[RMDB]
RNA sequence: GGGAACGACUCGAGUAGAGUCGAAAAGAUAUGGAAUCGUACACCUUUUGACGCUCUACCAUCGGAAACGAUGGAAUAGAGCGAUAAGGUGGACGAUUCCUAAGUCAAACACCGCUUCGGCGGUGAACAGAUAGUGAUCCUUCGGGAUCACUAUCUGAAAAGAAACAACAACAACAAC
Reactivity to DMS in 0.01 (KOAc 150mM, MgCl2 10mM, bicine 150mM(pH8.5), 24C), signal-to-noise 3, nucleotides 027 to 126: g010a020u010a300u000g000g010a020a010u000c000g050u000a020c010a010c000c000u010u000u000u030g020a300c070g010c020u000c000u000a070c000c000a000u000c000g000g000a100a080a220c010g000a020u000g020g020a100a070u010a020g020a020g020c020g020a020u000a010a010g000g020u000g000g010a010c000g030a000u000u010c000c000u000a010a070g000u010c030a120a120a300c000a020c000c000g030c020u000u010c230g040g040c000g030g010u000g010a060a180
Reactivity to 2A3 in 0.01 (KOAc 150mM, MgCl2 10mM, bicine 150mM(pH8.5), 24C), signal-to-noise 1, nucleotides 027 to 126: g020a000u090a030u180g000g000a000a000u010c000g000u000a000c000a010c010c000u070u070u050u200g300a130c050g020c000u000c000u010a020c030c000a010u000c000g010g010a040a050a050c020g010a000u000g000g100a010a010u080a010g010a000g020c000g010a000u000a000a000g000g000u020g000g000a000c000g000a000u010u020c000c000u000a010a000g000u000c000a010a100a090c010a010c000c000g000c030u060u080c280g190g000c010g020g000u010g010a020a000